[RMDB]
RNA sequence: GGGAACGACUCGAGUAGAGUCGAAAAAGCAUGCAGUGCGUCGGUGAUUUGCACUUUAAUCUCAGUUAUCAAAAUUUUAUCUGGCGAAACUAAUUACGCUCUUGCUGCUUAAUCGAAUCAUAGUAGAUUAGCUUAAUCCAGGCACCAGGUGCCAGGACUCCAGAAACAACUUCGGUUGUUUCUGGAGAAAAGAAACAACAACAACAAC
Reactivity to 2A3 in 0.01 (KOAc 150mM, MgCl2 10mM, bicine 150mM(pH8.5), 24C), signal-to-noise 2, nucleotides 027 to 156: a000g120c090a080u180g010c030a000g020u010g040c010g020u060c010g080g020u020g020a110u050u010u130g000c020a040c020u070u140u090a100a120u030c050u000c000a060g020u040u050a180u170c000a050a100a060a160u060u220u190u080a100u040c000u010g000g000c020g050a070a010a010c020u010a000a150u240u120a040c010g010c020u000c030u030u100g010c020u000g000c000u030u060a020a000u040c010g010a020a010u070c140a080u130a060g000u000a000g010a040u010u010a010g000c030u080u140a010a010u060c010c000a050g000g020c010a020c020c070a030g180g010u010g020c010c000a000g000g040a030
The data come from the RNA Mapping Database (RMDB), library ARCHII. An RNA of 207 nucleotides, treated with 2A3 and read out base by base. Reactivities are given for positions 27 through 156. The 2A3 profile rests on 684 reads. For 2A3 the reverse transcriptase was SuperScript II with manganese. The RNA was probed in 150 mM KOAc, 10 mM MgCl2 and 150 mM bicine (pH 8.5) at 24 C.